[RMDB]
RNA sequence: GGGAACGACUCGAGUAGAGUCGAAAAUCCCGAGUGAGGCUUAUCCCGGGGAAUCCGGCCAAGUCCCGAAAUGUCUAGUCCCGUGGUCUCACUUCCAAAAGGAGGAGCGGGGGGACUUGGAACACGAGUUGUAUAGUAUCUUCGGAUACUAUACAACAAAAGAAACAACAACAACAAC
Reactivity to 2A3 in 0.01 (KOAc 150mM, MgCl2 10mM, bicine 150mM(pH8.5), 24C), signal-to-noise 3, nucleotides 027 to 126: u010c000c030c000g000a020g030u030g000a030g030g000c020u050u120a070u170c040c010c000g020g000g000g150a190a160u100c020c010g000g000c010c010a000a000g000u000c000c000c000g060a130a150a090u200g030u070c110u130a040g110u050c000c010c000g010u040g040g030u000c000u010c010a080c000u010u010c060c000a100a240a050a100g030g030a020g000g030a060g020c010g000g000g010g000g000g000a000c000u000u010g000g010a020a010c050a010c020g100a100
Reactivity to DMS in 0.01 (KOAc 150mM, MgCl2 10mM, bicine 150mM(pH8.5), 24C), signal-to-noise 3, nucleotides 027 to 126: u000c010c010c000g020a040g010u010g030a010g000g010c040u000u010a080u020c140c010c020g010g000g000g040a200a110u000c040c020g000g000c020c030a020a030g010u000c010c000c000g020a040a100a130u000g010u010c170u020a170g000u000c020c000c000g010u000g010g010u010c010u000c020a130c010u000u000c060c060a100a120a120a230g010g010a060g010g000a170g010c020g000g000g000g000g000g000a010c000u010u000g000g000a090a070c130a070c160g000a150

An RNA of 177 nucleotides, treated with 2A3 and DMS and read out base by base.
The data come from the RNA Mapping Database (RMDB), library 15KREP.
The reactions ran in a buffer of 150 mM KOAc, 10 mM MgCl2 and 150 mM bicine (pH 8.5), at 24 C.
For 2A3, 2,617 sequencing reads were counted.
2A3 adducts were read by reverse transcription with SuperScript II with manganese.